RNA sequence: GGGAACGACUCGAGUAGAGUCGAAAAGAUAUGGAUCAUCAGACUGUUCGUUGGGUCGCAACAGCAUACGGCGUCGGAAACGACGUUAUGACAUGCGACAGACGAACAGUCUGAUGAUCCUAAGUCAGACAUCUCUGAAGUUCGCUUCAGAGAUGUCAAAAGAAACAACAACAACAAC
Reactivity to DMS in 0.01 (KOAc 150mM, MgCl2 10mM, bicine 150mM(pH8.5), 24C), signal-to-noise 1, nucleotides 027 to 126: g010a080u000a300u000g060g000a000u010c000a000u000c010a050g000a040c000u000g020u000u000c000g000u000u010g020g010g000u000c000g000c000a010a110c300a180g000c000a020u000a060c300g000g000c010g000u010c000g000g000a130a130a160c000g000a000c060g010u000u000a050u010g000a070c060a220u000g010c000g000a010c010a300g010a010c000g000a010a000c000a000g000u030c000u000g010a000u000g060a000u000c000c000u000a020a030g000u000c000a130